[RMDB]
RNA sequence: GGGAACGACUCGAGUAGAGUCGAAAAGGAACUAUCUACGGAUAGUUCCAACGCGGUCGUGAGACCGCGAGCCUUAGGCGUGAGCCUAAGGCAAGCUGGCGCGUGAGCGCCAGCAGAGGUGGCUACGGCCACCUCAAGUAGUAAGCGUGAGCUUACUACAAGCUACAUACGUGAGUAUGUAGCAAUCCGUCCAAGCCGCGGACGUUAAACUGUGGCACGGUUGUGCCUAGGUGCAACCCUGCUACUAAUGGCGGUACCCCUGCCCUAGGACAUUAUUCGUAAUGUCCAAAAGAAACAACAACAACAAC
Reactivity to 2A3 in 0.01 (KOAc 150mM, MgCl2 10mM, bicine 150mM(pH8.5), 24C), signal-to-noise 3, nucleotides 027 to 266: g000g000a000a000c010u010a010u000c000u030a030c300g070g000a000u000a000g000u000u000c000c000a000a000c010g000c000g000g020u020c030g070u060g210a120g000a050c000c010g000c010g000a020g000c010c000u000u000a000g000g010c020g030u080g070a010g000c000c000u000a000a000g000g000c000a000a010g020c000u020g010g020c020g010c030g030u060g040a060g040c000g030c000c000a000g030c010a010g000a000g000g010u020g010g000c030u040a070c300g120g000c000c000a000c000c010u000c000a000a030g000u000a000g000u000a010a000g000c030g020u090g100a020g010c000u000u000a010c000u000a010c010a000a020g000c000u010a000c000a000u010a000c010g060u050g090a070g010u000a000u000g000u000a000g000c000a000a010u050c050c000g000u000c000c010a100a070g010c000c000g000c010g000g000a000c010g010u000u030a030a030a030c090u070g000u010g020g000c000a000c010g000g000u000u000g000u010g020c000c050u140a230g110g030u000g000c000a000a010c000c000c010u000g020c010u010a010c000u060a100a240u140g050g010c030g000g000u090a080c010c010c000c000u080g080c010c020c030u100a040
Conditions: 150 mM KOAc, 10 mM MgCl2 and 150 mM bicine (pH 8.5), 24 C. An RNA of 307 nucleotides, treated with 2A3 and read out base by base. 2A3 adducts were read by reverse transcription with SuperScript II with manganese.